[RMDB]
RNA sequence: GGGAACGACUCGAGUAGAGUCGAAAAUUACCGCGCUAAGUUUAAACCUUUAAAUAUGCGUUGUAAGCCAGUGACCGCUUGUCACAAGGGCAGAAUUGGAAAUGAUUUUGCCUCCCGUAUUUGGAAAUUGUGUAUAUGUAUUCGUACAUAUACACAAAAAAGAAACAACAACAACAAC
Reactivity to DMS in 0.01 (KOAc 150mM, MgCl2 10mM, bicine 150mM(pH8.5), 24C), signal-to-noise 9, nucleotides 027 to 126: u010u000a020c010c050g010c000g010c000u000a010a160g000u000u000u000a010a040a230c280c210u020u000u000a010a020a010u000a040u020g000c000g020u000u000g000u000a000a020g010c210c170a100g010u000g000a010c010c300g010c140u010u020g010u000c010a010c010a120a200g000g000g000c000a000g000a000a010u000u000g000g000a010a010a010u000g000a010u000u000u000u000g000c000c000u000c010c000c010g020u010a080u010u010u010g010g000a120a110a120
Reactivity to 2A3 in 0.01 (KOAc 150mM, MgCl2 10mM, bicine 150mM(pH8.5), 24C), signal-to-noise 9, nucleotides 027 to 126: u010u000a000c000c010g000c000g000c000u010a020a020g020u010u020u030a130a200a260c060c050u180u080u040a010a010a010u040a010u040g000c000g000u000u000g000u000a020a020g130c100c090a040g010u000g000a000c020c060g100c300u160u290g000u000c000a000c010a040a030g000g000g000c000a000g000a010a010u010u010g030g010a000a000a020u020g000a010u000u000u010u010g010c000c000u030c010c000c000g090u100a220u090u110u130g140g070a050a090a110

This 177-nucleotide RNA was probed chemically with DMS and 2A3.
Conditions: 150 mM KOAc, 10 mM MgCl2 and 150 mM bicine (pH 8.5), 24 C.
Reactivities are given for positions 27 through 126.